[RMDB]
RNA sequence: GGGAACGACUCGAGUAGAGUCGAAAACACGACUACGAGGCGGGGUAGUACAGCACAGCGUGACGGCUAUUAUGGUGUACCAACCAAUGAUGCUGAACGAGCAAACUUGGCGAAUGCUAAAGUUACUUGGUUCAACACUGAAAUGGGAUGGGAAGAAGAUUGCUUACAAUUUCGAUUGUAAGCAAUCAAAAGAAACAACAACAACAAC
Reactivity to 2A3 in 0.01 (KOAc 150mM, MgCl2 10mM, bicine 150mM(pH8.5), 24C), signal-to-noise 9, nucleotides 027 to 156: c070a010c020g080a030c030u110a020c040g050a030g050g010c070g010g010g000g010u030a020g030u070a080c050a050g060c030a020c010a040g020c010g050u050g070a060c040g060g000c020u030a050u190u060a100u140g040g000u040g020u050a060c010c020a030a010c010c010a040a090u150g050a100u030g010c010u010g010a020a010c010g000a010g010c080a080a020a000c000u000u010g000g010c030g160a280a120u300g000c040u160a220a030a000g000u000u010a020c000u020u050g150g000u050u000c010a020a010c020a010c040u070g040a020a060a100u070g010g010g040a050u110g040g000g010a020a050g010a090a010
Reactivity to DMS in 0.01 (KOAc 150mM, MgCl2 10mM, bicine 150mM(pH8.5), 24C), signal-to-noise 3, nucleotides 027 to 156: c050a090c070g020a160c030u000a110c070g000a080g020g010c070g010g000g070g030u000a050g010u000a050c070a080g010c040a070c060a080g010c050g010u010g020a100c210g010g030c050u010a120u010u000a100u000g010g010u000g020u010a040c010c050a040a110c030c020a070a130u000g000a070u010g030c000u000g010a020a010c020g020a010g000c000a020a010a010c000u000u000g010g000c000g010a100a100u010g040c000u000a010a040a010g030u000u000a010c000u000u000g070g030u010u000c020a010a010c010a030c040u000g010a060a100a160u010g000g000g000a180u000g010g000g020a050a070g010a080a150

The record gives the reactivity of an RNA of 207 nucleotides to 2A3 and DMS. High DMS reactivity at an A or C suggests that its Watson-Crick edge is free. For DMS, 9,370 sequencing reads were counted. The 2A3 profile rests on 12,975 reads. For 2A3 the reverse transcriptase was SuperScript II with manganese. It was measured as part of the RMDB library OK3TST.